About this RNA
Conditions: 150 mM KOAc, 10 mM MgCl2 and 150 mM bicine (pH 8.5), 24 C. Chemical mapping of a 177-nucleotide RNA with 2A3. The 2A3 profile rests on 1,134 reads.

RNA sequence: GGGAACGACUCGAGUAGAGUCGAAAAGAUGAAAAUAACCAACAAUGUGAUCUUGCUUGCGGAGGCAAACUUUGCACAGUAUAAAAUCUGCAAGUAGUGCUAUUGUUGGAAAGCAUACUGUGCAAAAACUGGCCUACGUAUUCGUACGUAGGCCAGUAAAAGAAACAACAACAACAAC
Reactivity to 2A3 in 0.01 (KOAc 150mM, MgCl2 10mM, bicine 150mM(pH8.5), 24C), signal-to-noise 2, nucleotides 027 to 126: g090a030u300g020a030a020a040a040u130a040a060c000c000a000a010c010a010a010u190g070u030g300a300u050c000u010u060g010c000u030u000g000c030g000g000a000g000g120c060a110a000a030c040u030u050u000g020c000a000c030a030g050u020a030u000a180a030a000a180u000c040u040g000c000a020a000g020u000a000g120u000g080c010u000a010u000u030g010u000u000g010g070a060a000a000g060c000a000u020a060c030u000g000u000g080c010a000a000a000a000

2A3 adducts were read by reverse transcription with SuperScript II with manganese.